[RMDB]
This 177-nucleotide RNA was probed chemically with 2A3. 2A3 adducts were read by reverse transcription with SuperScript II with manganese.
RNA sequence: GGGAACGACUCGAGUAGAGUCGAAAACUCAAUGACUUCGGUCAUUGAGAAAGGACAAAAGUCCAACUGAGCAGCUAUGAGCUCAUACAUCGUCAUAGCAUAAAACACACACGUUCGCGUGUGUGAACGCGUCUAAUUCGUUCGCGAAUUAGACGCGAAAAGAAACAACAACAACAAC
Reactivity to 2A3 in 0.01 (KOAc 150mM, MgCl2 10mM, bicine 150mM(pH8.5), 24C), signal-to-noise 2, nucleotides 027 to 126: c000u010c000a000a010u000g050a000c020u030u040c210g090g000u000c000a000u010u000g000a000g000a040a040a000g040g000a010c010a040a300a050a040g010u000c000c020a000a060c030u030g000a000g020c010a010g040c010u000a000u010g010a000g060c010u010c000a070u260a110c080a090u150c250g000u000c000a000u000a000g000c000a010u080a000a100a000a000c000a000c000a000c000a000c000g030u040u040c300g020c010g080u000g000u010g010u000g000a020a010